An RNA of 177 nucleotides, treated with DMS and read out base by base.

RNA sequence: GGGAACGACUCGAGUAGAGUCGAAAAGGUCCUCGCCGAGGCCAAGCGUUACCAGGAGGCGGCAGAGCUGCUCGACGCCACCGAUCCUCGCCAUCCGUUCGACGCCGAGCUGGUGAGUUACGUGCGGAGUCUAGCACGGGUUCGCCCGUGCUAGACUAAAAGAAACAACAACAACAAC
Reactivity to DMS in 0.01 (KOAc 150mM, MgCl2 10mM, bicine 150mM(pH8.5), 24C), signal-to-noise 1, nucleotides 027 to 126: g010g060u040c020c000u000c030g000c060c040g000a180g000g000c040c070a140a250g000c050g080u000u040a150c100c020a130g000g020a150g020g000c080g000g000c070a070g030a080g010c090u000g000c050u000c040g000a130c050g000c080c000a110c010c070g000a070u010c130c010u000c080g000c030c030a070u000c020c020g030u000u010c050g010a090c120g040c040c020g010a110g000c030u000g000g000u030g000a110g020u000u000a160c100g020u000g000c010g010g000